[RMDB]
RNA sequence: GGGAACGACUCGAGUAGAGUCGAAAACGACAGAUAACGCGCCAGGUUGCCCAGCAAAAUACCGAUUACGCCAAAGUCAGCAUCCGAGAACGUGGUAUUGGCGAAGCCGAUCGCGCCGAGAACCGGCCAUGCCAUGGCAUUUCGAUGCCAUGGCAUGAAAAGAAACAACAACAACAAC
Reactivity to DMS in 0.01 (KOAc 150mM, MgCl2 10mM, bicine 150mM(pH8.5), 24C), signal-to-noise 3, nucleotides 027 to 126: c050g000a190c170a050g000a130u050a020a080c070g020c050g020c000c000a040g000g030u010u010g020c030c020c070a050g000c080a030a060a080a080u000a070c030c060g000a060u030u010a070c050g030c040c070a060a090a140g000u020c050a060g040c050a040u000c030c010g000a100g020a060a080c090g010u010g000g040u000a100u010u000g010g000c000g020a130a110g000c070c040g010a090u010c060g040c030g000c010c020g000a110g000a120a070c070c020g000g000c110
Reactivity to 2A3 in 0.01 (KOAc 150mM, MgCl2 10mM, bicine 150mM(pH8.5), 24C), signal-to-noise 5, nucleotides 027 to 126: c050g070a040c030a060g150a050u110a200a040c070g020c010g000c090c020a030g060g020u090u130g040c010c000c000a000g070c070a090a100a050a040u150a060c020c010g080a080u080u120a040c030g030c000c010a030a060a000g060u080c010a030g040c010a030u010c020c010g090a050g020a100a040c050g050u090g010g030u100a110u070u110g000g000c020g030a050a000g000c010c010g050a040u090c050g000c010g000c040c000g060a060g000a030a040c040c020g020g000c000